An RNA of 177 nucleotides, treated with 2A3 and DMS and read out base by base.
The RNA was probed in 150 mM KOAc, 10 mM MgCl2 and 150 mM bicine (pH 8.5) at 24 C.
The DMS profile rests on 1,726 reads.
For 2A3 the reverse transcriptase was SuperScript II with manganese.
For DMS the reverse transcriptase was MarathonRT.
RNA sequence: GGGAACGACUCGAGUAGAGUCGAAAAAAGUUCCGAACGGCACUUACAAACUCCGGAGACACAUUUGAUGAAGUUGUAAUCGUUAGUGAUCGAAUUCGGACUCGAUGAACUACACUGCCAAUCAGCAAUCGUGGAGGAUAUUCGUAUCCUCCACGAUAAAAGAAACAACAACAACAAC
Reactivity to 2A3 in 0.01 (KOAc 150mM, MgCl2 10mM, bicine 150mM(pH8.5), 24C), signal-to-noise 2, nucleotides 027 to 126: a000a020g020u070u020c030c010g020a020a040c000g010g000c000a000c020u080u030a000c060a090a110a040c000u000c050c000g170g020a010g150a000c110a000c010a150u090u120u080g050a070u070g020a050a040g000u050u070g060u100a070a090u100c060g030u030u030a010g000u020g070a170u070c010g020a090a000u060u050c020g040g000a020c000u050c040g030a050u070g020a050a020c010u090a030c090a030c050u110g050c040c000a080a180u170c020a030g110c070a040
Reactivity to DMS in 0.01 (KOAc 150mM, MgCl2 10mM, bicine 150mM(pH8.5), 24C), signal-to-noise 3, nucleotides 027 to 126: a080a110g010u010u000c020c010g000a030a070c130g010g020c080a030c170u000u000a060c070a050a080a090c050u000c010c010g000g000a300g000a040c140a100c140a090u000u000u000g020a300u030g000a030a080g000u000u000g010u000a040a060u010c180g010u020u010a020g010u000g000a070u000c010g000a030a120u000u010c150g010g010a130c100u020c020g000a080u000g000a060a060c030u000a040c070a090c130u010g000c010c030a050a170u000c080a050g010c150a090